Description
An RNA of 207 nucleotides, treated with 2A3 and read out base by base.
RNA sequence: GGGAACGACUCGAGUAGAGUCGAAAACUAAACAGGGCUUUCACCCUUCCUUUAGUUUCCUUCCUCUCCUGGAGAGGUCUUCUGCCCUAGCCCAGUCUUCGAAGCUUCCUUUGGCUACUACCCGGUGGAAACAACUGAAGCUUCAACGCCUUUUUUUAUACUAUAUGACGUUCGCGUCAUAUAGUAUAAAAGAAACAACAACAACAAC
Reactivity to 2A3 in 0.01 (KOAc 150mM, MgCl2 10mM, bicine 150mM(pH8.5), 24C), signal-to-noise 2, nucleotides 027 to 156: c010u010a010a010a020c300a280g040g000g010c080u190u300u300c120a100c010c000c030u000u010c000c000u010u020u000a010g010u000u040u080c010c010u040u110c000c000u030c000u030c020c160u130g020g090a020g000a010g100g000u000c030u090u030c040u040g040c000c020c000u020a040g000c030c010c020a060g020u000c080u140u070c180g010a010a010g020c000u010u020c000c000u030u060u070g030g010c010u030a030c010u050a100c050c030c020g030g000u010g020g080a220a250a090c010a030a010c030u020g000a020a000g020c000u010u000c020a020a020c030g050c020c030u020u030u030u010u000u010u010
Reactivities are given for positions 27 through 156. Conditions: 150 mM KOAc, 10 mM MgCl2 and 150 mM bicine (pH 8.5), 24 C.